The data come from the RNA Mapping Database (RMDB), library OK3TST. This 207-nucleotide RNA was probed chemically with 2A3 and DMS. For 2A3 the reverse transcriptase was SuperScript II with manganese. DMS adducts were read by reverse transcription with MarathonRT. For DMS, 3,397 sequencing reads were counted.

RNA sequence: GGGAACGACUCGAGUAGAGUCGAAAACGCUGCUAGGCGGCUGGCUGGCAGGCUCGUUUGGUUUCCGAUCAAUCUUCUGGGUCAUGGCGGCGGUGUGUGUCGUCGCGGUGAUCGUCGCACAACUGUUUACUACCGAAUCCACAGCUGAGGAAACCGAGCUAAUGCGUAAUUUCGAUUACGCAUUAGCAAAAGAAACAACAACAACAAC
Reactivity to 2A3 in 0.01 (KOAc 150mM, MgCl2 10mM, bicine 150mM(pH8.5), 24C), signal-to-noise 2, nucleotides 027 to 156: c050g000c030u030g010c040u060a050g070g050c060g060g110c070u070g050g000c000u000g000g020c010a010g060g040c110u070c090g030u060u060u070g040g000u010u000u030c010c000g030a090u100c040a060a040u020c070u200u000c040u190g050g000g000u000c020a040u120g120g000c010g000g000c000g010g000u100g030u020g020u040g050u090c000g000u020c020g000c000g060g000u050g000a020u020c030g030u020c040g000c020a030c020a120a160c060u030g070u160u200u120a090c070u070a100c020c110g060a060a060u030c040c000a020c020a050g050c040u100g000a050g050g010a020a000a010c000c000g000a000
Reactivity to DMS in 0.01 (KOAc 150mM, MgCl2 10mM, bicine 150mM(pH8.5), 24C), signal-to-noise 1, nucleotides 027 to 156: c010g030c020u000g040c030u000a090g030g040c020g020g040c020u010g000g030c040u020g050g020c030a040g010g000c030u010c080g000u000u000u000g010g010u000u010u010c010c000g060a150u000c100a080a130u000c030u020u000c050u000g000g000g030u000c010a040u010g040g050c030g000g010c110g020g040u010g030u000g030u010g010u000c000g010u000c010g020c000g040g010u000g020a010u010c020g040u000c040g040c070a080c040a040a100c060u000g000u000u000u000a160c060u000a250c080c020g000a130a220u000c040c050a070c000a050g000c040u000g030a230g020g000a070a050a090c000c000g010a130